Chemical mapping of a 177-nucleotide RNA with 2A3 and DMS. 2A3 adducts were read by reverse transcription with SuperScript II with manganese. Reactivities are rounded to 0.1 and cut off at 0 and 3. Source: RMDB library OK2TST, as collected in RNAgym. DMS adducts were read by reverse transcription with MarathonRT. Reactivities are given for positions 27 through 126.
[RMDB]
RNA sequence: GGGAACGACUCGAGUAGAGUCGAAAAAUUGGGUUCGAUGUUGAAGCAGCUCAUGUUUGUGGAGAAAACAUCGGAACCAAUGUACCACUACAACUUGGUUUUUCAACAGGUAUUGAUUUUAUUGCACCGUACCACCUUGAUUCGUCAAGGUGGUACGAAAAGAAACAACAACAACAAC
Reactivity to 2A3 in 0.01 (KOAc 150mM, MgCl2 10mM, bicine 150mM(pH8.5), 24C), signal-to-noise 3, nucleotides 027 to 126: a000u020u000g000g000g010u010u010c020g000a000u000g010u000u030g050a120a020g030c050a020g000c030u070c240a170u230g240u110u230u060g050u050g040g130a060g070a080a190a010a000c000a020u000c000g020g020a010a010c010c000a000a000u000g000u000a030c000c000a040c040u120a050c030a180a020c020u010u030g150g000u120u060u020u160u210c080a080a070c010a050g060g000u080a120u080u140g110a100u080u120u080u190a150u130u230g000c070a040c000
Reactivity to DMS in 0.01 (KOAc 150mM, MgCl2 10mM, bicine 150mM(pH8.5), 24C), signal-to-noise 4, nucleotides 027 to 126: a020u000u000g010g020g020u000u000c010g030a060u000g000u000u010g000a210a230g000c090a040g000c030u010c180a110u000g010u010u000u000g060u000g020g020a220g000a080a090a020a010c000a000u000c010g010g000a010a030c010c000a010a010u000g010u010a150c020c010a110c160u000a080c190a040a050c060u000u010g000g000u000u010u010u000u010c110a080a070c080a050g010g010u000a090u010u000g010a130u010u000u010u000a100u000u030g010c200a140c210